[RMDB]
RNA sequence: GGGAACGACUCGAGUAGAGUCGAAAAUAAGCCGAGAGGCGCUGUGGUCGUUACGGCAGAUAUCAACGGCCCACUUAACAACCUAGGUAUCUUCGACCUAGUGUUUUGUGACGCAGCUGGACCACGACAAGGUCUAUUUAUUCGUAAAUAGACCUUGAAAAGAAACAACAACAACAAC
Reactivity to DMS in 0.01 (KOAc 150mM, MgCl2 10mM, bicine 150mM(pH8.5), 24C), signal-to-noise 9, nucleotides 027 to 126: u010a090a160g010c010c010g000a210g000a210g010g010c020g020c140u010g020u000g020g010u000c020g010u000u010a150c120g010g010c060a100g010a130u010a100u010c100a060a070c070g010g010c030c050c010a020c030u000u000a030a030c040a040a070c300c010u000a010g000g010u000a060u010c190u000u010c230g000a030c000c000u000a010g010u000g000u000u000u000u000g010u000g010a120c140g000c030a060g010c020u000g010g010a090c010c010a050c070g000a250
Reactivity to 2A3 in 0.01 (KOAc 150mM, MgCl2 10mM, bicine 150mM(pH8.5), 24C), signal-to-noise 4, nucleotides 027 to 126: u080a020a020g000c010c010g040a050g010a040g060g010c030g010c080u070g020u040g020g000u010c020g050u090u120a060c050g030g000c070a040g070a190u200a030u130c060a050a040c040g040g000c000c020c000a010c000u030u030a030a010c030a030a050c020c030u010a010g000g020u040a080u150c120u170u150c210g060a030c010c000u000a010g000u000g000u060u020u020u010g010u010g010a020c050g010c050a040g000c020u050g030g020a030c000c010a020c030g040a020